RNA sequence: GGGAACGACUCGAGUAGAGUCGAAAAACCUGAAUUCGUUCAGGUAAAAAUCCUAAGUCAGCCGUUUGACGCGUUAGGGAGCUCGUGUCGGAAACGACAUAGAGCGAAGAACUAACGCCGAGGCUGAUAUGGAAAAAAACACCUAUUCGUAGGUGAAUCACAAUUUAGGAUUCGUCCUAAAUUGUGAAAAAGAAACAACAACAACAAC
Reactivity to DMS in 0.01 (KOAc 150mM, MgCl2 10mM, bicine 150mM(pH8.5), 24C), signal-to-noise 2, nucleotides 027 to 156: a100c000c010u000g000a010a040u000u000c260g020u020u000c000a000g010g010u000a000a050a060a140a070u000c000c000u000a060a250g000u000c000a020g010c000c010g000u010u010u010g020a140c100g000c000g010u000u000a020g020g010g020a280g010c010u000c010g040u010g020u000c000g000g020a150a140a220c000g000a030c000a030u010a010g020a040g020c020g000a060a100g000a140a150c010u000a030a020c000g020c000c020g000a060g020g040c000u010g020a000u000a080u000g000g000a000a000a060a110a090a030a190c000a020c010c000u010a030u010u000c260g030u000a010g000g010u000g000a100a170
Reactivity to 2A3 in 0.01 (KOAc 150mM, MgCl2 10mM, bicine 150mM(pH8.5), 24C), signal-to-noise 3, nucleotides 027 to 156: a010c010c000u000g020a020a020u100u060c130g020u100u010c050a000g000g010u020a010a000a020a040a040u030c010c010u020a090a020g010u000c010a000g010c020c030g120u160u280u300g080a090c070g000c000g000u000u000a010g000g020g010a010g000c000u000c000g000u000g000u000c000g010g040a140a100a090c010g010a000c000a000u060a160g010a000g000c000g000a040a020g010a010a010c000u000a000a010c000g020c000c010g000a020g000g000c010u000g000a000u000a010u010g010g000a030a060a000a000a110a000a040c010a000c150c000u020a020u050u070c250g060u080a000g000g010u040g010a020a070
Structure probing data (DMS and 2A3) for a 207-nucleotide construct. The 2A3 profile rests on 3,882 reads. Conditions: 150 mM KOAc, 10 mM MgCl2 and 150 mM bicine (pH 8.5), 24 C. For DMS the reverse transcriptase was MarathonRT.